The record gives the reactivity of an RNA of 177 nucleotides to DMS and 2A3. The DMS profile rests on 964 reads.
RNA sequence: GGGAACGACUCGAGUAGAGUCGAAAAUACGACGUAUUCGUACGUCGUAAAGGUACGAAAGUACAAAGGAGCAAAAGCAUGAGCUCCUUAAAAUCAUGCAAAACACGAGCCGAUUCGUCGGCUCGAAGGUUUUUGUUUAGUUCGCUAAACAAAAACCAAAAGAAACAACAACAACAAC
Reactivity to DMS in 0.01 (KOAc 150mM, MgCl2 10mM, bicine 150mM(pH8.5), 24C), signal-to-noise 1, nucleotides 027 to 126: u000a000c000g010a000c020g010u000a020u000u050c280g020u000a000c010g010u000c000g000u000a040a080a040g020g020u020a010c020g000a110a130a250g010u000a010c000a100a150a120g000g000a010g020c010a080a030a170a110g010c000a000u000g020a090g000c000u000c000c010u000u010a000a000a010a110u000c010a010u000g020c000a130a010a070a050c230a180c010g000a010g010c000c000g000a000u000u040c130g010u000c000g010g070c010u000c000g010a040a070
Reactivity to 2A3 in 0.01 (KOAc 150mM, MgCl2 10mM, bicine 150mM(pH8.5), 24C), signal-to-noise 1, nucleotides 027 to 126: u060a000c000g000a000c000g000u000a010u020u080c190g020u030a000c000g000u010c000g010u000a010a000a040g130g010u000a000c020g040a190a030a020g000u000a000c030a050a220a020g000g010a010g000c020a100a120a140a030g010c000a020u000g000a010g020c000u000c010c000u010u030a010a010a000a010u040c010a000u000g010c000a050a050a000a040c140a020c030g000a000g000c010c000g020a010u020u040c180g050u010c000g080g010c000u000c000g000a000a000
The RNA was probed in 150 mM KOAc, 10 mM MgCl2 and 150 mM bicine (pH 8.5) at 24 C. It was measured as part of the RMDB library M2PK50. 2A3 is a SHAPE reagent: it acylates the 2'-hydroxyl of flexible nucleotides of all four kinds.